[RMDB]
RNA sequence: GGGAACGACUCGAGUAGAGUCGAAAACAACUAUGAAGCAGGCAAUGGGACCGAUUUCCGUGUGUCUGUGGAGUUAUGUAUGUUGGUUCGGGUGAGUACCGCAGAUCGGUGUAGGCGUAAGCUGAAACGAAGCAGAAUGGUUCGCCAUUCUGCUUCGAAAAGAAACAACAACAACAAC
Reactivity to DMS in 0.01 (KOAc 150mM, MgCl2 10mM, bicine 150mM(pH8.5), 24C), signal-to-noise 1, nucleotides 027 to 126: c040a080a030c100u000a120u010g010a290a210g000c040a000g030g010c060a060a050u030g000g000g000a050c200c220g000a190u000u000u000c010c000g060u010g030u030g000u000c000u010g000u000g000g000a160g030u000u020a110u000g010u000a050u000g010u000u000g000g000u040u010c070g010g000g020u000g000a050g030u000a030c050c110g000c130a060g000a020u010c040g010g000u000g000u040a110g000g020c010g010u000a060a160g040c010u000g000a060a090a120
Structure probing data (DMS) for a 177-nucleotide construct. For DMS the reverse transcriptase was MarathonRT. Source: RMDB library RFMREP, as collected in RNAgym.